[RMDB]
RNA sequence: GGGAACGACUCGAGUAGAGUCGAAAAGGGAGCGACUGUUUACUAAAAACACAGGGGGCUGCAAUCCGGCAACGGUUUGUACAGCCCCUGAGUCCUGCCCAGUGCGGGUACCUGAAACCAGGGUACAAACCGAUUGAAAGUUCGCUUUCAAUCGGUUAAAAGAAACAACAACAACAAC
Reactivity to 2A3 in 0.01 (KOAc 150mM, MgCl2 10mM, bicine 150mM(pH8.5), 24C), signal-to-noise 2, nucleotides 027 to 126: g000g000g000a060g060c110g030a030c050u050g020u040u010u080a230c160u140a110a100a000a000a000c070a010c020a030g000g010g010g020g000c020u020g010c010a000a000u010c010c000g000g000c030a060a060c030g000g010u000u020u000g040u030a050c010a010g030c000c040c000c010u000g040a000g000u010c000c010u020g080c000c020c000a050g010u090g090c080g030g040g040u010a020c000c030u030g030a130a000a000c040c000a020g000g000g000u000a000c000a010
Reactivity to DMS in 0.01 (KOAc 150mM, MgCl2 10mM, bicine 150mM(pH8.5), 24C), signal-to-noise 4, nucleotides 027 to 126: g000g000g000a050g030c160g010a090c140u000g000u010u000u000a120c170u060a080a100a050a020a030c040a110c110a120g000g020g030g010g020c000u000g010c020a010a000u000c000c010g000g000c300a090a120c010g000g000u000u000u000g010u010a090c000a020g050c000c010c000c010u000g040a060g010u000c000c000u010g000c010c010c010a130g000u030g020c100g030g000g000u000a000c010c000u000g010a100a070a170c110c130a210g000g000g010u000a010c010a110

Chemical mapping of a 177-nucleotide RNA with 2A3 and DMS. Conditions: 150 mM KOAc, 10 mM MgCl2 and 150 mM bicine (pH 8.5), 24 C. The 2A3 profile rests on 1,632 reads.